Conditions: 150 mM KOAc, 10 mM MgCl2 and 150 mM bicine (pH 8.5), 24 C. Structure probing data (DMS) for a 177-nucleotide construct. DMS adducts were read by reverse transcription with MarathonRT.
[RMDB]
RNA sequence: GGGAACGACUCGAGUAGAGUCGAAAAGCCCACACUGUACUGGGAGAAGGACGGGAUGGCCCUGGACGAAGUGUGGGACAGCAGCCACUUCGCGCUCCAGCCGGGCCGCGCCGAGGACGGCCCCGGCAAGGUGGCGAGUAUUCGUACUCGCCACCUUAAAAGAAACAACAACAACAAC
Reactivity to DMS in 0.01 (KOAc 150mM, MgCl2 10mM, bicine 150mM(pH8.5), 24C), signal-to-noise 1, nucleotides 027 to 126: g030c010c000c070a050c060a060c030u000g000u010a040c040u000g000g020g000a100g000a070a150g010g000a060c070g000g020g000a080u000g000g030c010c060c000u000g000g000a090c020g020a090a040g020u000g030u000g000g000g000a060c070a020g010c100a110g010c070c020a030c070u000u010c080g000c050g010c090u000c070c040a140g010c030c000g020g020g040c030c000g010c070g050c080c060g010a110g010g010a110c030g000g000c130c050c010c070g010g000c060